RNA sequence: GGGAACGACUCGAGUAGAGUCGAAAAGGUGAUGUUCAAGUAGUGUGAGCUGUUGAUCUGCACAUCUAAACAGCAAUUAUUGACUGUCGCCGAAGUCACUCGAUUUGAGUAACAGAUGUGCAGAUCUAAUACUAUCAAGUAGUGAGUGACUUCGAUACGUUACCACGAAUUUCGAUUCGUGGUAACGAAAAGAAACAACAACAACAAC
Reactivity to DMS in 0.01 (KOAc 150mM, MgCl2 10mM, bicine 150mM(pH8.5), 24C), signal-to-noise 1, nucleotides 027 to 156: g030g060u010g030a070u000g000u020u010c050a080a060g030u020a090g030u010g050u010g000a030g050c050u000g010u000u020g000a050u010c000u060g000c000a000c040a000u010c010u000a220a060a090c090a100g000c060a130a090u000u020a080u000u000g000a110c030u000g050u000c030g020c010c080g030a020a020g000u000c000a000c000u010c010g000a110u000u010u000g000a120g050u000a090a120c150a040g020a000u000g030u000g040c000a030g000a010u000c030u000a090a040u000a020c120u000a120u000c030a020a130g020u000a090g050u020g010a060g050u010g000a040c000u000u000c000g010a090u000a130
Reactivity to 2A3 in 0.01 (KOAc 150mM, MgCl2 10mM, bicine 150mM(pH8.5), 24C), signal-to-noise 3, nucleotides 027 to 156: g110g000u080g030a030u020g020u100u120c080a030a010g020u060a040g020u100g020u040g060a010g010c020u010g000u070u080g010a000u010c000u010g000c000a000c000a000u000c030u060a020a140a090c010a010g070c010a050a110u180u070a110u050u090g060a060c030u020g000u040c050g000c120c040g000a000a000g000u000c000a000c010u000c050g080a060u070u040u190g090a070g040u060a110a050c050a170g020a000u000g000u000g010c000a000g000a000u000c000u020a000a000u060a020c060u030a030u160c000a070a030g060u060a050g110u110g140a000g000u010g000a000c000u010u000c010g000a000u020a020